The record gives the reactivity of an RNA of 177 nucleotides to 2A3 and DMS.
[RMDB]
RNA sequence: GGGAACGACUCGAGUAGAGUCGAAAAACUACGCUAGUAUCGCUACGGCGAUACUAGCGUAGAACUGACCUAUGAAUUGACAGCCAGUGCUCUUGUCUCCCUCUGGCUGCCAAUUCCAUAGGUCAAACCCUUACUUAGAGUUCGCUCUAAGUAAGGGAAAAGAAACAACAACAACAAC
Reactivity to 2A3 in 0.01 (KOAc 150mM, MgCl2 10mM, bicine 150mM(pH8.5), 24C), signal-to-noise 9, nucleotides 027 to 126: a000c000u000a000c000g010c000u000a000g000u000a010u000c000g010c010u030a050c300g040g000c000g000a000u000a000c000u000a000g000c000g000u000a000g000a000a000c020u010g000a000c000c000u000a000u010g000a000a000u000u000g000a010c000a010g000c010c000a020g020u050g090c050u050c070u250u190g080u070c050u050c060c010c000u020c000u000g000g010c000u000g000c000c000a000a000u010u000c020c010a000u000a000g000g000u000c000a000a000a000
Reactivity to DMS in 0.01 (KOAc 150mM, MgCl2 10mM, bicine 150mM(pH8.5), 24C), signal-to-noise 4, nucleotides 027 to 126: a130c000u000a000c000g010c010u020a000g020u000a000u010c000g030c010u010a100c190g030g020c000g000a010u000a000c010u000a010g010c000g010u000a000g000a070a070c140u010g000a010c000c000u000a000u000g010a030a010u010u000g010a030c000a010g000c000c000a010g000u010g010c080u010c080u010u010g000u000c080u000c020c030c010u010c000u000g000g000c000u000g000c010c000a010a000u000u000c110c050a000u000a000g000g010u000c000a000a070a120